Chemical mapping of a 207-nucleotide RNA with DMS and 2A3. Reactivities are rounded to 0.1 and cut off at 0 and 3. For DMS, 3,057 sequencing reads were counted. Reactivities are given for positions 27 through 156. DMS (dimethyl sulfate) methylates the pairing face of unpaired adenines and cytosines. For 2A3 the reverse transcriptase was SuperScript II with manganese. The RNA was probed in 150 mM KOAc, 10 mM MgCl2 and 150 mM bicine (pH 8.5) at 24 C.
[RMDB]
RNA sequence: GGGAACGACUCGAGUAGAGUCGAAAAAUCAGGCCAACAACGCCGGCGGCGACCAGUCGCAGGCCGGCGAGCAGGACCAGCACGACAACCAGGACCAGGGCGCGGCCGGCGGGAACGGCGGCGAUUCUGGUAACCGCGAAUACGAGCAGCUGCCAGAAUUCUAUUGCUAUUUCGAUAGCAAUAGAAUAAAAGAAACAACAACAACAAC
Reactivity to DMS in 0.01 (KOAc 150mM, MgCl2 10mM, bicine 150mM(pH8.5), 24C), signal-to-noise 2, nucleotides 027 to 156: a110u000c030a100g030g010c000c020a080a070c040a180a180c020g010c030c000g050g050c030g020g010c000g000a100c050c090a170g020u010c020g060c030a060g040g040c000c010g010g020c010g030a060g020c080a110g000g020a060c040c020a110g000c080a130c030g000a130c030a090a090c000c040a110g030g020a080c030c020a100g030g010g000c020g030c020g010g040c010c030g010g100c040g000g000g000a150a140c050g000g010c000g040g030c020g010a110u010u000c010u000g010g020u000a060a040c000c030g000c000g000a170a190u000a090c050g000a160g010c070a030g000c020u010g030c000c010a100g000a060
Reactivity to 2A3 in 0.01 (KOAc 150mM, MgCl2 10mM, bicine 150mM(pH8.5), 24C), signal-to-noise 4, nucleotides 027 to 156: a000u100c050a030g060g000c030c010a030a040c040a110a050c090g000c000c000g010g000c000g020g000c000g010a060c070c090a110g180u040c000g000c000a000g150g020c000c000g010g000c030g010a010g030c040a030g000g060a040c040c010a000g000c040a010c030g090a050c040a060a050c030c030a030g020g030a020c000c000a010g010g020g000c030g000c020g100g000c010c000g030g010c040g020g070g010a100a010c000g010g010c000g020g000c010g070a110u090u010c000u020g010g000u030a040a050c010c010g020c010g050a060a040u160a110c030g020a020g020c040a010g010c020u040g030c020c010a030g080a070